[RMDB]
RNA sequence: GGGAACGACUCGAGUAGAGUCGAAAAGGAUCACCUGAGCUCAGGAGUUCAAGACCACCCAGGACAACAUCAUGAGACCCCAUCUCUACUAAAAAUACAAAAAAAUGAACCGGGUGUGGUGGCACACGAUGAAGAUAGAUUUCGAUCUAUCUUCAUCAAAAGAAACAACAACAACAAC
Reactivity to 2A3 in 0.01 (KOAc 150mM, MgCl2 10mM, bicine 150mM(pH8.5), 24C), signal-to-noise 4, nucleotides 027 to 126: g060g010a080u060c030a060c090c010u020g030a030g060c040u050c110a040g090g030a030g020u050u050c050a070a020g050a030c000c000a000c010c000c010a030g000g030a020c020a100a020c000a110u140c020a040u080g040a020g030a080c010c000c020c000a040u010c020u000c000u040a080c030u070a050a050a040a050a070u190a070c090a050a140a020a030a010a020a110u070g010a050a020c020c030g030g060g010u090g040u040g040g010u050g060g010c040a010c010a010c100
Reactivity to DMS in 0.01 (KOAc 150mM, MgCl2 10mM, bicine 150mM(pH8.5), 24C), signal-to-noise 6, nucleotides 027 to 126: g010g010a060u000c050a070c040c040u000g000a130g020c140u010c060a060g010g000a140g000u010u000c050a070a080g000a100c050c040a060c070c000c010a090g000g000a060c030a040a040c060a040u000c110a080u000g000a070g000a040c020c020c010c020a090u000c020u000c020u000a070c040u000a010a030a040a050a060u010a080c070a030a010a030a060a050a060a070u000g000a070a130c060c040g000g010g020u000g010u000g010g020u010g010g000c050a040c120a050c120